Structure probing data (DMS) for a 177-nucleotide construct. Values cover nucleotides 27 to 126. The RNA was probed in 150 mM KOAc, 10 mM MgCl2 and 150 mM bicine (pH 8.5) at 24 C. For DMS, 1,148 sequencing reads were counted.

RNA sequence: GGGAACGACUCGAGUAGAGUCGAAAACGUCAUGCCUUCGGGCAUGACGAAAUCCCAGGAACCGACUCUCUCUCUCUCUCUCUCUCUAAGGUACCAAGAGAAAAAUCCGCAUCUUCGGAUGCGGAAACUUAUAUAAUAUGUUCGCAUAUUAUAUAAGAAAAGAAACAACAACAACAAC
Reactivity to DMS in 0.01 (KOAc 150mM, MgCl2 10mM, bicine 150mM(pH8.5), 24C), signal-to-noise 1, nucleotides 027 to 126: c010g020u000c010a030u010g000c000c000u000u010c210g070g010g010c010a000u000g010a000c000g010a020a050a130u010c000c000c010a160g000g030a060a130c070c020g010a040c050u000c020u000c010u000c020u000c000u000c010u000c010u000c020u000c010u000c010u010c000u000a060a080g010g000u000a070c050c050a130a100g000a100g000a010a140a100a150a120u000c010c000g000c020a020u000c000u010u000c190g010g010a010u000g010c000g000g000a000a020a030